[RMDB]
RNA sequence: GGGAACGACUCGAGUAGAGUCGAAAAAACUGUAUACUGGGUUCCAGGGAAAGCAAAUCCUUGGCAGUACCAUGUUGGAAGAUGAAUUCACACCUGAGGAUGUUAAUAUGCAGAUUAUGGGUGUGGUGUAGUAAAGUGUUCGCACUUUACAAAAGAAACAACAACAACAAC
Reactivity to DMS in 0.01 (KOAc 150mM, MgCl2 10mM, bicine 150mM(pH8.5), 24C), signal-to-noise 5, nucleotides 027 to 129: a030a030c110u060g020u010a170u000a050c050u020g010g050g030u050u050c020c000a020g010g010g020a000a080a120g040c260a120a020a080u000c000c000u050u000g020g010c120a070g030u040a110c160c040a090u000g010u000u000g000g000a070a040g010a100u030g000a050a030u050u040c040a000c020a000c010c000u050g000a000g010g020a150u000g010u000u060a070a110u030a030u050g000c050a000g000a110u000u010a070u050g000g000g000u000g030u020g000g000u000g000u000a170
Reactivity to 2A3 in 0.01 (KOAc 150mM, MgCl2 10mM, bicine 150mM(pH8.5), 24C), signal-to-noise 6, nucleotides 027 to 129: a000a020c090u090g010u040a130u060a070c030u040g060g150g000u130u090c000c000a000g020g000g000a030a070a050g220c110a080a060a090u050c000c010u000u010g030g000c020a010g000u040a070c020c000a060u100g000u020u020g080g050a110a070g080a130u170g060a020a070u110u050c010a000c000a010c040c000u030g010a030g090g050a070u030g030u020u030a130a090u130a130u300g020c020a000g040a070u090u070a100u300g000g000g000u030g000u000g010g010u020g000u020a050
This 170-nucleotide RNA was probed chemically with DMS and 2A3. DMS adducts were read by reverse transcription with MarathonRT. The RNA was probed in 150 mM KOAc, 10 mM MgCl2 and 150 mM bicine (pH 8.5) at 24 C. Source: RMDB library 15KLIB, as collected in RNAgym.